An RNA of 207 nucleotides, treated with DMS and 2A3 and read out base by base. It was measured as part of the RMDB library OK3TST. DMS adducts were read by reverse transcription with MarathonRT. The reactions ran in a buffer of 150 mM KOAc, 10 mM MgCl2 and 150 mM bicine (pH 8.5), at 24 C.

RNA sequence: GGGAACGACUCGAGUAGAGUCGAAAAGGGCUAUACCGGGCCCGAUACCGGAAUUAGUAGUUUUCUACGAGAGGCCCAAUCUGCGGCCGAAUGCAGUGUAGGUCGAAGCGAGGACCGAGACUCGAUAAUUACGUCGAUAGAUGGACGAUUACAUCAAGAUAUAGCAUAUAUUCGUAUAUGCUAUAUCAAAAGAAACAACAACAACAAC
Reactivity to DMS in 0.01 (KOAc 150mM, MgCl2 10mM, bicine 150mM(pH8.5), 24C), signal-to-noise 4, nucleotides 027 to 156: g010g010g030c010u000a070u000a080c040c020g040g010g010c020c010c130g010a070u010a100c030c020g020g020a110a100u010u010a080g030u000a050g020u000u010u000u000c020u010a110c020g000a130g000a180g010g010c000c000c010a080a220u000c020u000g000c020g040g010c040c100g010a070a070u010g020c040a120g010u000g020u000a160g000g020u010c000g000a070a070g010c030g010a300g030g000a050c040c020g000a170g010a140c030u000c010g010a100u010a050a080u000u000a070c050g010u010c040g020a150u000a090g010a150u000g020g010a100c050g000a180u010u020a080c050a060u000c030a060a300
Reactivity to 2A3 in 0.01 (KOAc 150mM, MgCl2 10mM, bicine 150mM(pH8.5), 24C), signal-to-noise 5, nucleotides 027 to 156: g010g000g000c010u030a020u040a250c020c020g000g020g000c020c010c050g060a010u030a010c010c000g010g060a120a090u110u050a060g030u010a020g030u050u080u090u110c040u020a040c030g020a010g020a050g130g000c000c000c040a020a090u070c060u100g030c040g060g000c030c050g020a050a010u120g030c040a010g040u020g010u120a030g020g020u010c020g040a060a020g050c030g040a050g060g000a030c030c040g010a010g020a020c000u010c010g010a010u070a140a070u180u050a050c030g000u010c030g050a050u050a170g080a050u060g060g000a010c020g020a040u040u130a040c050a080u070c080a100a000